[RMDB]
RNA sequence: GGGAACGACUCGAGUAGAGUCGAAAACUAGGCUUCGGCCUAGCUUUUUCCUAAGUCGGACGAAGUCACUGCAAGUGCGAUAAGAUUCGGAAACGAAUCUUUUGACGCAUGAUGACCAGUGACCGUCCGAUAUGGACUAUUUUGUCUUCGGACAAAAAUCUGUAUCCUGAUUCGUCAGGAUACAGAUAAAAGAAACAACAACAACAAC
Reactivity to DMS in 0.01 (KOAc 150mM, MgCl2 10mM, bicine 150mM(pH8.5), 24C), signal-to-noise 3, nucleotides 027 to 156: c000u000a010g010g030c000u000u030c300g080g040c000c000u010a000g000c000u000u000u000u000u000c000c020u000a070a300g010u000c000g000g000a040c020g000a080a190g020u000c010a010c010u010g020c000a070a220g020u000g020c000g020a170u000a030a010g010a020u000u010c000g040g000a210a110a300c020g030a030a010u000c010u000u000u000u010g000a300c030g010c000a030u000g000a090u000g010a180c300c000a040g010u010g000a030c010c000g020u000c000c010g020a000u000a010u000g010g010a130c140u000a150u010u000u000u000g010u000c010u000u000c290g010g000a030c020a010a040a050a110
Reactivity to 2A3 in 0.01 (KOAc 150mM, MgCl2 10mM, bicine 150mM(pH8.5), 24C), signal-to-noise 6, nucleotides 027 to 156: c000u000a000g010g000c000u060u080c300g150g000c000c000u010a010g000c000u090u090u000u040u030c020c000u040a190a040g030u000c000g000g000a010c030g070a300a070g000u000c000a000c000u000g030c010a140a300g010u000g000c010g020a020u000a070a010g000a000u000u010c010g040g030a080a100a090c010g000a000a000u000c000u010u020u020u050g090a050c000g000c010a000u020g070a140u080g020a040c050c000a000g000u000g000a000c000c000g000u000c000c000g000a000u000a010u040g030g000a020c080u130a190u100u070u020u030g000u000c000u020u050c240g080g010a010c000a010a020a030a020
Structure probing data (DMS and 2A3) for a 207-nucleotide construct. It was measured as part of the RMDB library RNAMAK. The RNA was probed in 150 mM KOAc, 10 mM MgCl2 and 150 mM bicine (pH 8.5) at 24 C. For DMS the reverse transcriptase was MarathonRT. The DMS profile rests on 4,543 reads. For 2A3 the reverse transcriptase was SuperScript II with manganese. Values are in units of 0.01, from 0 to 300, in steps of 10.